[RMDB]
RNA sequence: GGGAACGACUCGAGUAGAGUCGAAAAGGGUUAGCGUUCGCGCUAACCCCAGGAUCCAACAUGUCAAAUCUCGCAGACAUGAAACGAUCAAAAGCGAGAAAACUAGACAGUCAUUCGUGACUGUCAAACGGAACUCAAUAUUCGUAUUGAGUUCCGUAAAAGAAACAACAACAACAAC
Reactivity to 2A3 in 0.01 (KOAc 150mM, MgCl2 10mM, bicine 150mM(pH8.5), 24C), signal-to-noise 3, nucleotides 027 to 126: g000g020g000u000u000a000g010c010g000u020u060c300g000c000g020c110u000a000a000c010c000c000c000a030g000g120a060u030c020c010a010a020c000a040u010g000u020c010a020a060a300u020c020u000c010g010c020a000g000a000c010a000u000g040a100a040a020c100g040a060u160c070a020a010a010a020g010c000g000a010g000a040a040a000a040c110u060a060g000a010c000a000g010u010c000a010u060u090c200g090u020g000a010c000u000g000u000c000a010a010
Reactivity to DMS in 0.01 (KOAc 150mM, MgCl2 10mM, bicine 150mM(pH8.5), 24C), signal-to-noise 3, nucleotides 027 to 126: g000g000g030u010u000a010g030c010g040u000u010c260g030c000g010c000u000a000a000c020c000c000c010a060g010g010a110u000c000c010a170a300c010a000u010g010u030c010a040a130a090u000c000u020c000g040c000a050g000a010c010a000u000g000a020a040a070c240g000a120u000c190a020a000a200a040g000c000g020a000g010a030a110a090a100c230u020a090g000a010c000a000g000u000c010a030u020u010c260g020u010g000a010c000u000g010u000c020a000a080